[RMDB]
The record gives the reactivity of an RNA of 177 nucleotides to 2A3 and DMS. It was measured as part of the RMDB library M2PK50. DMS adducts were read by reverse transcription with MarathonRT. The 2A3 profile rests on 1,496 reads. High DMS reactivity at an A or C suggests that its Watson-Crick edge is free.
RNA sequence: GGGAACGACUCGAGUAGAGUCGAAAAGUCUCUAUCUUCGGAUAGAGACAAAUAUAAGUACGACUUAGAGCUAGAUCAAUUAAUAUCGUCGACAUCGUAAAUAAAGAGGUAUGUUCGCAUACCUCAAGUUAGGAAAGCUGUUCGCAGCUUUCCUAACAAAAGAAACAACAACAACAAC
Reactivity to 2A3 in 0.01 (KOAc 150mM, MgCl2 10mM, bicine 150mM(pH8.5), 24C), signal-to-noise 2, nucleotides 027 to 126: g000u000c000u000c000u000a000u010c010u030u070c270g090g000a000u000a000g010a030g030a000c000a000a010a000u050a000u000a020a030g030u030a020c000g020a020c030u020u110a030g010a030g080c050u120a060g050a090u090c090a040a080u110u150a150a100u120a060u280c040g000u000c010g020a030c000a040u060c040g060u110a100a120a110u130a050a180a000g000a000g000g000u000a000u010g020u010u040c140g000c100a000u010a010c000c000u000c000a010a000
Reactivity to DMS in 0.01 (KOAc 150mM, MgCl2 10mM, bicine 150mM(pH8.5), 24C), signal-to-noise 1, nucleotides 027 to 126: g000u000c000u000c000u010a000u000c000u000u020c240g000g020a060u000a000g000a010g010a000c000a000a050a040u000a110u000a090a110g000u000a020c040g000a070c010u010u020a160g000a100g000c120u000a080g010a020u010c110a080a180u010u020a110a030u010a060u000c040g030u000c000g030a170c300a050u000c040g020u000a010a040a040u020a100a110a110g000a030g000g000u010a000u000g060u000u000c270g070c000a020u000a000c000c000u020c000a010a020